Structure probing data (2A3 and DMS) for a 177-nucleotide construct. 2A3 adducts were read by reverse transcription with SuperScript II with manganese. Conditions: 150 mM KOAc, 10 mM MgCl2 and 150 mM bicine (pH 8.5), 24 C.
RNA sequence: GGGAACGACUCGAGUAGAGUCGAAAAGUGGACGCUGCCUGGCCAGCGGCAGGCCGCCCUGCGCGUCAGGAACGGCGCCACCCGCGCCGUACGCGUUAUCUGGCGCGCCGGCCGGCGCGCAUCGCGAAUUAUUAGCUAUGUUCGCAUAGCUAAUAAUAAAAGAAACAACAACAACAAC
Reactivity to 2A3 in 0.01 (KOAc 150mM, MgCl2 10mM, bicine 150mM(pH8.5), 24C), signal-to-noise 2, nucleotides 027 to 126: g060u050g060g030a030c050g000c050u060g020c030c070u090g060g030c040c020a020g010c030g030g010c010a020g080g050c020c000g000c010c010c000u000g000c040g010c010g010u020c000a030g050g000a050a030c000g010g000c000g000c000c020a140c020c030c000g000c010g000c000c000g040u080a050c080g020c010g090u060u070a080u080c030u040g010g000c030g000c020g030c020c000g000g020c010c000g040g000c090g000c050g000c040a060u110c040g010c010g030a050
Reactivity to DMS in 0.01 (KOAc 150mM, MgCl2 10mM, bicine 150mM(pH8.5), 24C), signal-to-noise 7, nucleotides 027 to 126: g030u000g000g020a110c040g010c020u000g010c030c030u000g020g020c040c050a230g020c050g020g020c030a080g010g020c070c030g010c230c050c050u010g010c020g030c030g020u000c040a040g000g000a100a050c020g010g010c000g020c010c080a110c210c120c090g000c020g010c020c040g040u000a050c090g010c100g010u010u010a090u010c070u000g010g020c090g030c020g130c140c300g010g000c160c020g070g070c090g070c230g030c090a060u000c040g000c070g010a140
The 2A3 profile rests on 5,616 reads. The data come from the RNA Mapping Database (RMDB), library OK2TRN.